[RMDB]
RNA sequence: GGGAACGACUCGAGUAGAGUCGAAAAAAAAAUAUUGAUGAGCUUCAAGCUUUCGCCCCUAUCUGAAAACUAAGAGAAACUUCCAAUGUUGAAUGCGUGAUUGGUCUUACUGAAAUGAAACUAAAAAGUAUUAAGACAAGUUCGCUUGUCUUAAUACAAAAGAAACAACAACAACAAC
Reactivity to DMS in 0.01 (KOAc 150mM, MgCl2 10mM, bicine 150mM(pH8.5), 24C), signal-to-noise 1, nucleotides 027 to 126: a050a080a180a100a000u000a050u030u000g000a170u010g000a060g030c030u000u010c140a050a050g010c000u000u000u000c020g020c080c010c000c040u010a090u000c030u000g000a080a040a080a100c070u010a010a080g000a110g000a040a070a110c120u000u000c070c000a050a050u000g010u000u000g000a010a040u000g040c060g010u020g000a120u000u000g010g010u000c040u020u000a020c100u010g010a070a020a070u000g000a060a020a070c060u000a030a030a070a070a130